[RMDB]
RNA sequence: GGGAACGACUCGAGUAGAGUCGAAAAGAUAUGGAUGGGAUACUUUCGGGACUAUUGACAUGUCGCGGUUCGGAAACGAACCCGGCGACAACAGCAAUCAGUCCCGAAAGUAUCCCAUCCUAAGUCAGUAUUACUGAGACUUCGGUCUCAGUAAUACAAAAGAAACAACAACAACAAC
Reactivity to DMS in 0.01 (KOAc 150mM, MgCl2 10mM, bicine 150mM(pH8.5), 24C), signal-to-noise 1, nucleotides 027 to 126: g000a060u010a300u000g000g010a040u010g020g040g000a010u000a000c020u000u000u000c010g020g000g000a040c000u010a040u000u000g010a100c120a300u000g000u010c000g080c010g010g000u000u000c000g000g000a130a160a140c000g000a000a010c010c090c300g050g030c000g000a020c000a040a090c280a230g000c010a000a000u010c190a020g020u000c000c000c000g000a000a010a000g010u000a000u020c010c000c000a000u000c000c000u000a020a080g010u000c060a150

An RNA of 177 nucleotides, treated with DMS and read out base by base. The reactions ran in a buffer of 150 mM KOAc, 10 mM MgCl2 and 150 mM bicine (pH 8.5), at 24 C. Source: RMDB library TTRINS, as collected in RNAgym. For DMS the reverse transcriptase was MarathonRT. Reactivities are given for positions 27 through 126.